[RMDB]
RNA sequence: GGGAACGACUCGAGUAGAGUCGAAAAUGCUUGCCGAAAUGGUAAAGGUAAACCAUGCUGUGGAAAUGGUUGAGACACAGGGACUUGAACCUCUUAGGAAGUAUCUGGAGAAGCUUGAUGCCGAAGCGCCACGUACAAGCUUCGGCUUGUACGUGGCAAAAGAAACAACAACAACAAC
Reactivity to DMS in 0.01 (KOAc 150mM, MgCl2 10mM, bicine 150mM(pH8.5), 24C), signal-to-noise 2, nucleotides 027 to 126: u000g000c020u000u000g000c000c010g000a070a110a070u030g000g020u040a020a130a030g000g000u000a040a060a040c020c000a100u020g020c020u010g020u000g000g000a070a110a080u000g010g000u010u000g000a170g000a100c020a050c060a010g000g010g010a040c030u040u000g000a100a080c030c030u010c040u010u020a070g020g030a090a070g020u000a050u020c020u000g000g000a090g010a140a050g000c000u030u010g000a080u020g050c050c030g010a040a040g000c220
Reactivity to 2A3 in 0.01 (KOAc 150mM, MgCl2 10mM, bicine 150mM(pH8.5), 24C), signal-to-noise 3, nucleotides 027 to 126: u100g000c020u000u010g030c000c010g060a160a190a120u160g030g000u110a180a050a050g050g030u070a180a030a040c000c010a040u060g000c040u070g050u100g030g040a020a130a150u100g040g030u010u090g020a000g000a040c030a000c020a090g000g070g060a030c060u040u060g020a070a070c000c000u000c010u050u080a060g000g010a040a030g030u090a100u020c020u030g100g030a030g000a050a050g020c020u030u080g030a070u140g120c050c010g000a060a010g080c020
Structure probing data (DMS and 2A3) for a 177-nucleotide construct.
Source: RMDB library OK1LIB, as collected in RNAgym.
The DMS profile rests on 3,354 reads.
For 2A3 the reverse transcriptase was SuperScript II with manganese.
High 2A3 reactivity points to a flexible backbone, as in loops and unpaired stretches.
The RNA was probed in 150 mM KOAc, 10 mM MgCl2 and 150 mM bicine (pH 8.5) at 24 C.
For DMS the reverse transcriptase was MarathonRT.